[RMDB]
RNA sequence: GGGAACGACUCGAGUAGAGUCGAAAAUAAAGGGCGUCAAAUACAUAGACUGGUUCUGGUUGUGUCUGUGAUAUCAGGAUGAGAAUUAAACAGACUGUGUUUAUAAUAGUUUUGUCAUCAGGACAGUUAUAAGCAAGAUUAAUCUGAUUGACUAAGCGAAUAAGACGCAGUUCGCUGCGUCUUAUUCAAAAGAAACAACAACAACAAC
Reactivity to DMS in 0.01 (KOAc 150mM, MgCl2 10mM, bicine 150mM(pH8.5), 24C), signal-to-noise 2, nucleotides 027 to 156: u000a110a070a090g010g010g050c020g030u000c020a060a080a160u000a070c060a210u000a110g010a060c030u060g050g030u000u010c010u020g030g020u000u000g030u000g000u000c030u000g030u000g010a200u000a070u000c030a070g010g000a110u000g000a200g020a100a140u010u000a080a080a060c030a080g000a030c030u010g020u020g010u010u000u010a000u000a050a040u000a190g000u000u000u000u010g030u020c060a110u010c030a080g010g010a040c000a210g020u000u000a020u000a020a040g030c000a030a070g030a080u010u010a070a060u000c070u000g030a130u000u010g010a060c020u000a060a150g010c250
Reactivity to 2A3 in 0.01 (KOAc 150mM, MgCl2 10mM, bicine 150mM(pH8.5), 24C), signal-to-noise 3, nucleotides 027 to 156: u160a000a030a030g060g040g020c020g020u030c050a030a070a050u160a080c060a050u120a050g050a030c010u020g040g000u070u040c010u030g040g000u020u020g040u000g000u000c020u020g030u020g050a030u040a020u050c010a010g060g000a040u060g010a010g040a080a120u220u090a140a120a020c000a000g030a020c000u020g040u010g020u100u040u020a050u020a080a100u070a100g020u010u020u040u090g000u000c020a030u010c010a020g020g060a050c050a030g010u030u050a100u020a090a010g050c020a000a020g020a090u120u110a030a030u060c020u010g020a040u040u010g010a030c010u030a030a040g060c030